The data come from the RNA Mapping Database (RMDB), library TTRDES.
The record gives the reactivity of an RNA of 177 nucleotides to DMS and 2A3.
For DMS the reverse transcriptase was MarathonRT.
Values cover nucleotides 27 to 126.
DMS (dimethyl sulfate) methylates the pairing face of unpaired adenines and cytosines.

RNA sequence: GGGAACGACUCGAGUAGAGUCGAAAAGAUAUGGAGAACGUCAGGUGGGAGAACUGUGAUCGGAAACGAUCACUGUUCUGUGAACACCUGAGCGUUCUCCUAAGUCAAACACGUUCUUCGGAACGUGGUGAUCGAUAUGGUUCGCCAUAUCGAUCACAAAAGAAACAACAACAACAAC
Reactivity to DMS in 0.01 (KOAc 150mM, MgCl2 10mM, bicine 150mM(pH8.5), 24C), signal-to-noise 3, nucleotides 027 to 126: g020a040u000a300u010g000g010a000g030a020a000c000g020u000c000a010g000g020u000g000g010g000a030g000a010a010c000u010g020u000g010a010u000c000g020g000a100a080a240c020g030a000u000c000a000c000u000g000u000u010c020u000g010u000g000a180a250c000a000c010c010u000g000a040g000c010g020u000u000c000u010c000c000u000a010a070g000u000c020a100a130a300c010a000c000g010u000u000c000u010u020c260g010g000a010a010c010g030u000g000
Reactivity to 2A3 in 0.01 (KOAc 150mM, MgCl2 10mM, bicine 150mM(pH8.5), 24C), signal-to-noise 3, nucleotides 027 to 126: g030a020u050a060u220g000g000a010g010a010a010c000g040u010c050a010g000g000u010g010g050g030a030g000a010a010c010u020g000u000g000a000u000c000g030g040a080a030a070c010g010a010u000c010a000c000u020g000u000u010c010u030g300u020g030a030a000c010a000c020c000u000g000a010g010c000g000u000u000c000u000c000c010u000a010a000g000u020c040a010a070a050c010a010c020g000u010u000c030u050u040c240g150g010a020a000c030g000u020g010